Chemical mapping of a 177-nucleotide RNA with 2A3 and DMS. Source: RMDB libraries RFM100 and RFMREP, as collected in RNAgym. The reactions ran in a buffer of 150 mM KOAc, 10 mM MgCl2 and 150 mM bicine (pH 8.5), at 24 C.
[RMDB]
RNA sequence: GGGAACGACUCGAGUAGAGUCGAAAAGUCGAUCCUAAGACAUAGGGUAGUUCCGUUUGAAAGCGCGCCCUAGUGCGCCGUUUGUCGAAAGGGAAGCCGGUUAAUAUUCCGGCACCUGGAUGUGGAUUUAUCUUCGAUUAUUCGUAAUCGAAGAUAAAAAAGAAACAACAACAACAAC
Reactivity to 2A3 in 0.01 (KOAc 150mM, MgCl2 10mM, bicine 150mM(pH8.5), 24C), signal-to-noise 6, nucleotides 027 to 126: g080u050c030g020a050u030c010c020u050a090a030g090a020c030a090u090a030g010g020g040u050a080g080u130u040c020c040g060u050u070u120g150a120a070a020g020c040g000c010g010c030c020c050u080a080g030u110g140c020g020c010c040g000u000u040u090g220u040c020g060a050a020a000g040g020g000a120a030g000c000c000g010g010u050u070a120a060u060a100u210u040c000c000g000g000c010a010c000c000u020g070g050a080u090g090u100g060g060a030u020
Reactivity to DMS in 0.01 (KOAc 150mM, MgCl2 10mM, bicine 150mM(pH8.5), 24C), signal-to-noise 8, nucleotides 027 to 126: g020u010c040g010a050u000c010c010u000a090a120g010a080c070a060u010a240g000g000g010u000a080g010u000u010c010c000g010u000u000u010g010a060a060a040g010c040g010c030g010c000c030c190u020a090g020u020g010c010g010c050c050g010u010u000u000g010u010c020g000a040a070a050g010g000g000a090a150g020c000c000g000g000u000u010a100a100u020a240u020u020c000c000g010g020c000a010c000c000u000g000g010a100u010g010u000g000g000a150u020